[RMDB]
RNA sequence: GGGAACGACUCGAGUAGAGUCGAAAAAUGAUAGACGACAUCCGUUUUCUCAAUCUGCUGGAGGAGAGCCAUGUCGAUUUCAGAUGUAUCGAUUUUCCAUGGUUCUGCAAGGAGAAUCUGCCUCUGACCCUUCAGCUGGCUUCGGCCAGCUGAAGGGAAAAGAAACAACAACAACAAC
Reactivity to 2A3 in 0.01 (KOAc 150mM, MgCl2 10mM, bicine 150mM(pH8.5), 24C), signal-to-noise 1, nucleotides 027 to 126: a000u170g000a030u130a130g060a000c030g000a000c000a000u030c060c000g030u030u110u000u110c070u030c040a110a110u030c050u090g040c010u060g070g100a080g070g050a040g000a010g000c030c030a020u050g030u070c090g080a060u000u190u160c110a090g130a190u140g070u010a100u170c010g010a010u010u030u030u020c000c000a000u070g120g000u140u090c080u230g240c070a080a130g000g000a000g000a000a000u040c010u010g090c000c000u000c000u030g010a090

Structure probing data (2A3) for a 177-nucleotide construct. The RNA was probed in 150 mM KOAc, 10 mM MgCl2 and 150 mM bicine (pH 8.5) at 24 C. The 2A3 profile rests on 451 reads. The data come from the RNA Mapping Database (RMDB), library OK1LIB. As a SHAPE reagent, 2A3 marks flexible, mostly unpaired nucleotides at the ribose 2'-OH.